[RMDB]
RNA sequence: GGGAACGACUCGAGUAGAGUCGAAAACGGGGCUAAACGUAACACCGAAGCUGUGGAUGGAUACCGUAUGGUAUCCGUGGUAGGAGAGCGUUCUAAGGGCGUUGAAGCUAGACCGGAAGGACUGGUGUCAUAUUCCUAAGUUCGCUUAGGAAUAUGAAAAAGAAACAACAACAACAAC
Reactivity to 2A3 in 0.01 (KOAc 150mM, MgCl2 10mM, bicine 150mM(pH8.5), 24C), signal-to-noise 9, nucleotides 027 to 126: c020g010g000g020g030c050u070a080a050a010c030g070u070a090a020c040a030c050c030g060a060a020g010c060u050g040u100g150g050a080u080g010g000a000u010a000c010c010g120u270a200u300g000g000u010a000u000c010c000g010u010g000g020u060a040g000g080a070g010a000g020c050g040u070u000c030u080a070a100g030g000g000c030g040u040u090g050a050a000g000c010u020a020g050a070c010c020g040g030a050a040g040g010a030c050u060g020g030u040g050
Reactivity to DMS in 0.01 (KOAc 150mM, MgCl2 10mM, bicine 150mM(pH8.5), 24C), signal-to-noise 9, nucleotides 027 to 126: c080g000g010g010g010c100u010a050a060a070c090g000u010a080a110c100a100c050c040g010a100a100g010c060u000g020u010g000g010a090u010g000g000a010u000a000c000c000g010u010a060u020g020g010u000a000u000c000c000g030u000g010g010u000a070g010g010a090g000a090g010c040g010u000u000c050u010a100a120g000g000g010c070g010u000u000g000a090a110g000c030u000a060g010a130c040c020g010g020a120a090g010g010a100c040u000g000g010u000g010
Notes: This 177-nucleotide RNA was probed chemically with 2A3 and DMS. As a SHAPE reagent, 2A3 marks flexible, mostly unpaired nucleotides at the ribose 2'-OH. For 2A3, 26,113 sequencing reads were counted. DMS adducts were read by reverse transcription with MarathonRT.